The data come from the RNA Mapping Database (RMDB), libraries RFM100 and RFMREP. Structure probing data (DMS and 2A3) for a 177-nucleotide construct. The reactions ran in a buffer of 150 mM KOAc, 10 mM MgCl2 and 150 mM bicine (pH 8.5), at 24 C. Values cover nucleotides 27 to 126.

RNA sequence: GGGAACGACUCGAGUAGAGUCGAAAAACUAGUGCUGGAAUGCUUGGUGGUCGAAAGGCAACGCCUUUGGAUGGGUCUGCGGCGGAUUAGGUUGACGCCGGUGUAACGUACCGGCGUGCCUGUAAUCUAAUAUAGUUACUUUCGAGUAACUAUAUUAAAAAGAAACAACAACAACAAC
Reactivity to DMS in 0.01 (KOAc 150mM, MgCl2 10mM, bicine 150mM(pH8.5), 24C), signal-to-noise 9, nucleotides 027 to 126: a100c060u010a060g020u010g010c020u010g010g010a110a060u010g010c040u000u010g010g020u000g010g010u010c050g000a050a060a060g000g010c030a100a120c180g010c020c020u000u010u010g010g010a080u010g000g000g010u000c030u000g010c090g010g010c060g010g000a060u010u010a030g000g010u000u010g010a040c000g010c000c000g000g000u000g000u010a090a120c300g010u030a050c000c000g000g000c000g030u000g000c010c010u000g010u020a050a050u010c070
Reactivity to 2A3 in 0.01 (KOAc 150mM, MgCl2 10mM, bicine 150mM(pH8.5), 24C), signal-to-noise 8, nucleotides 027 to 126: a000c060u070a030g040u030g060c020u030g020g070a130a070u080g030c030u040u090g030g020u040g010g030u060c040g060a090a040a020g050g000c060a110a080c120g020c010c000u050u050u050g090g010a070u060g030g010g020u010c020u030g020c000g040g000c020g030g000a020u040u080a030g030g030u030u140g110a010c000g000c000c000g000g000u010g000u010a090a080c080g010u020a000c000c000g000g000c000g000u000g000c000c000u040g030u100a040a050u020c020